[RMDB]
RNA sequence: GGGAACGACUCGAGUAGAGUCGAAAACUGGACGAAGGUCAGAAAGUAUCCUUCACCAUCGAAAGCGGCGCUAAAGGCCCGGCAGCUGGCAACGUAACUUCUCUGUAAGUUCAAGCCGCUAAGAAUCACUUAAGGUUAGAUUCGUCUAACCUUAAGUAAAAGAAACAACAACAACAAC
Reactivity to DMS in 0.01 (KOAc 150mM, MgCl2 10mM, bicine 150mM(pH8.5), 24C), signal-to-noise 9, nucleotides 027 to 126: c060u010g010g010a110c100g010a020a020g010g010u010c100a130g020a130a100a120g010u020a100u020c010c000u000u000c010a150c040c040a080u010c050g000a070a110a050g000c010g000g000c010g010c130u020a060a140a130g000g000c010c020c070g000g010c120a070g010c050u010g010g010c050a070a080c140g000u020a020a010c010u000u000c020u030c180u020g010u020a020a010g010u000u000c040a120a170g000c010c000g010c010u000a040a140g000a080a120u020c170
Reactivity to 2A3 in 0.01 (KOAc 150mM, MgCl2 10mM, bicine 150mM(pH8.5), 24C), signal-to-noise 9, nucleotides 027 to 126: c010u020g020g050a040c070g010a040a010g010g010u060c060a050g230a100a170a010g110u110a110u150c000c000u000u010c010a030c010c010a090u090c030g040a120a100a000g020c010g010g000c010g000c080u110a120a080a110g080g010c010c010c000g100g040c040a030g010c040u110g010g000c010a040a020c050g030u090a010a010c020u050u020c200u010c080u160g210u300a010a020g010u020u020c020a040a020g000c010c000g000c000u010a030a020g020a030a050u110c050